[RMDB]
RNA sequence: GGGAACGACUCGAGUAGAGUCGAAAAGAUAUGGAGCAUCGAAGGCGCACAGCGAAACAUAUGGUUAUAUCGGAAACGAUAUAACCAUAUGUAGUAGCUGUGAACUACGCUUAGAUGCUCCUAAGUCCAGUGUGUUAUUGUUCGCAAUAACACACUGAAAAGAAACAACAACAACAAC
Reactivity to DMS in 0.01 (KOAc 150mM, MgCl2 10mM, bicine 150mM(pH8.5), 24C), signal-to-noise 6, nucleotides 027 to 126: g020a080u020a300u010g000g010a000g010c010a000u010c010g010a200a280g010g010c010g000c000a010c000a010g000c000g010a250a230a190c010a010u000a000u000g010g010u000u000a000u010a000u000c000g000g000a150a120a260c000g000a000u000a000u000a010a010c000c000a000u000a000u000g000u000a030g000u000a210g010c000u010g000u000g000a050a030c120u020a300c020g030c000u000u000a300g000a000u000g000c010u010c000c000u000a000a060g000u010c030
Reactivity to 2A3 in 0.01 (KOAc 150mM, MgCl2 10mM, bicine 150mM(pH8.5), 24C), signal-to-noise 1, nucleotides 027 to 126: g050a000u150a050u280g010g000a010g000c000a000u000c010g050a090a050g050g000c010g000c020a000c000a000g000c000g030a030a010a010c010a000u010a000u000g040g020u020u010a010u000a000u010c000g020g040a130a040a030c000g010a000u010a010u010a000a000c000c000a000u000a000u000g000u000a000g000u000a000g000c000u010g010u010g000a010a000c010u130a030c000g000c010u000u030a000g000a010u000g000c000u000c000c000u000a010a000g000u000c010